RNA sequence: GGGAACGACUCGAGUAGAGUCGAAAAGCCGAUGAAUUGCCGAGAAGCCUGGCUCGAAAUCGUCGACGCAUCGACGACGGUCCUGCCAUGAGACCGUAACGAGCACAUGUCGCCUCGAAUGGCGUCGUAUAACAUGAGUGGUUCGCCACUCAUGUAAGAACUAAAUCGCUUUCGAGCGAUUUAGUUCAAAAGAAACAACAACAACAAC
Reactivity to 2A3 in 0.01 (KOAc 150mM, MgCl2 10mM, bicine 150mM(pH8.5), 24C), signal-to-noise 3, nucleotides 027 to 156: g070c070c010g010a010u090g080a020a220u120u150g000c010c070g030a030g010a120a020g020c020c040u050g000g030c020u000c010g070a090a110a110u040c000g000u000c000g000a050c110g020c270a170u080c030g000a000c020g000a000c000g000g000u000c000c010u090g190c030c020a120u180g020a030g000a150c010c000g000u040a030a010c020g010a000g050c010a000c000a170u190g030u080c030g050c000c000u040c100g070a040a070u100g040g020c000g010u020c020g000u090a110u050a190a010c010a000u010g000a000g000u000g020g010u070u050c140g020c020c000a000c000u000c000a000u000g000u000a000a000
Source: RMDB library M2RFPK, as collected in RNAgym. Chemical mapping of a 207-nucleotide RNA with 2A3. The reactions ran in a buffer of 150 mM KOAc, 10 mM MgCl2 and 150 mM bicine (pH 8.5), at 24 C. For 2A3 the reverse transcriptase was SuperScript II with manganese.